Source: RMDB library OK3TST, as collected in RNAgym. The record gives the reactivity of an RNA of 207 nucleotides to 2A3.

[RMDB]
RNA sequence: GGGAACGACUCGAGUAGAGUCGAAAAUUAUGAAACAUACUGUGUUUACCAAAAUCACAAAUGGAAUUGGCCAUUGCCAAUGUGGAGACUUGGCAGCAGCACACAGGCCAAGCAAACUCCCCAAAAUACAAACAUGAUUGCCUGUGACUCAGUACUAGUCCUUCUAAGUCUUCGGACUUAGAAGGACAAAAGAAACAACAACAACAAC
Reactivity to 2A3 in 0.01 (KOAc 150mM, MgCl2 10mM, bicine 150mM(pH8.5), 24C), signal-to-noise 2, nucleotides 027 to 156: u230u060a080u150g060a070a020a020c060a010u050a030c000u010g000u000g040u070u050u130a100c040c040a110a090a030a060u130c020a040c080a120a150a030u060g010g030a040a090u050u000g030g000c030c140a240u250u300g010c000c000a010a010u060g000u030g040g040a020g070a170c020u000u010g010g000c010a050g020c020a000g000c000a030c020a010c040a110g020g090c000c000a000a010g000c010a010a050a040c020u020c000c000c000c010a030a050a030a050u300a080c070a020a110a010c030a060u040g000a060u020u060g110c010c060u060g020u010g020a010c000u000c040a000g010u050a010c010u110a030